[RMDB]
RNA sequence: GGGAACGACUCGAGUAGAGUCGAAAAUCUAAGUACCCGGAGGAGAAGAAAUCAACUGCGAGAUUCCCCGAGUAGCGGCGAGCGAAAGGGGACCGAUGGCCAAACCGGCGAGCGGGCGGGCGCCAGCUUAGCCUGAUCCGUUCGCGGAUCAGGCUAAAAAAGAAACAACAACAACAAC
Reactivity to DMS in 0.01 (KOAc 150mM, MgCl2 10mM, bicine 150mM(pH8.5), 24C), signal-to-noise 1, nucleotides 027 to 126: u160c060u050a140a160g000u030a070c040c040c010g010g000a110g030g000a140g020a160a160g000a070a060a080u010c120a060a100c160u000g000c040g000a140g010a230u000u000c000c000c000c000g000a060g000u010a080g000c000g000g020c300g000a300g000c060g000a080a040a200g000g030g000g000a010c170c040g000a070u050g010g000c050c060a000a110a140c270c000g000g000c000g000a010g000c010g000g000g000c000g000g000g000c010g000c010c060a030g030c100